Structure probing data (2A3) for a 207-nucleotide construct. The RNA was probed in 150 mM KOAc, 10 mM MgCl2 and 150 mM bicine (pH 8.5) at 24 C.

RNA sequence: GGGAACGACUCGAGUAGAGUCGAAAAGGAAAGGGAACUAGUCCGCAAAACCAGAUUCCUACCGGUAGCAGGCGGAACAAGCAGUGUGUACAUUGAGGUAUUGCAUUUGACUCAAGGGACCUGCUGGGAACAGAUGUACACUCCAGGCGGAGAAGUGCUCAUUAGGUGGAUUCGUCCACCUAAUGAGAAAAGAAACAACAACAACAAC
Reactivity to 2A3 in 0.01 (KOAc 150mM, MgCl2 10mM, bicine 150mM(pH8.5), 24C), signal-to-noise 1, nucleotides 027 to 156: g060g000a110a000a010g010g030g000a000a040c040u030a070g000u030c030c010g000c060a020a020a020a080c020c010a020g000a090u090u120c020c020u060a120c010c040g040g040u050a020g030c040a030g010g010c020g000g060a060a050c020a050a040g010c060a030g000u000g010u000g010u180a020c020a100u060u040g040a060g020g100u130a080u130u210g020c090a090u110u100u240g040a070c000u020c030a010a040g000g000g020a040c010c010u000g000c030u020g000g000g000a040a010c010a020g050a050u050g010u060a020c010a010c020u030c020c040a090g050g000c000g040g030a040g010a070a000g020u050g060